[RMDB]
RNA sequence: GGGAACGACUCGAGUAGAGUCGAAAAGAUGUGAUGGCAUCGUUACGAAGAUCACAAGGGACCUGGCCGUGACUUUUGCCCAAGGAGGAAUGGCAAAGCUGUGCAGGCGAAAUGAGAAAUUGCAAACUUACGUUGAUUCCUUCGGGAAUCAACGUAAAAAAGAAACAACAACAACAAC
Reactivity to 2A3 in 0.01 (KOAc 150mM, MgCl2 10mM, bicine 150mM(pH8.5), 24C), signal-to-noise 2, nucleotides 027 to 126: g120a030u120g040u030g050a030u090g080g090c000a080u050c100g060u100u060a030c120g050a000a000g030a170u020c000a030c050a170a120g080g100g080a130c020c000u020g150g000c030c000g030u020g040a070c000u000u030u030u000g040c010c000c020a030a040g110g000a010g050g020a010a150u070g000g000c000a040a010a050g000c020u000g020u050g020c060a020g010g000c070g070a040a050a040u300g060a110g080a060a000a090u130u060g000c030a220a000a000c020
Reactivity to DMS in 0.01 (KOAc 150mM, MgCl2 10mM, bicine 150mM(pH8.5), 24C), signal-to-noise 2, nucleotides 027 to 126: g000a160u000g000u000g000a110u000g020g040c030a070u000c030g050u070u000a040c240g000a060a080g010a080u020c070a110c020a050a140g000g000g040a110c100c000u000g010g000c050c050g000u000g000a120c040u000u000u000u000g000c020c010c020a150a080g020g000a050g010g000a150a020u020g000g010c030a030a240a120g020c010u000g030u000g000c080a100g000g000c010g000a000a080a050u040g000a100g010a020a000a070u000u000g000c070a110a050a170c190
Record summary: Source: RMDB library RFM100, as collected in RNAgym. An RNA of 177 nucleotides, treated with 2A3 and DMS and read out base by base. For DMS the reverse transcriptase was MarathonRT. The 2A3 profile rests on 882 reads. The reactions ran in a buffer of 150 mM KOAc, 10 mM MgCl2 and 150 mM bicine (pH 8.5), at 24 C.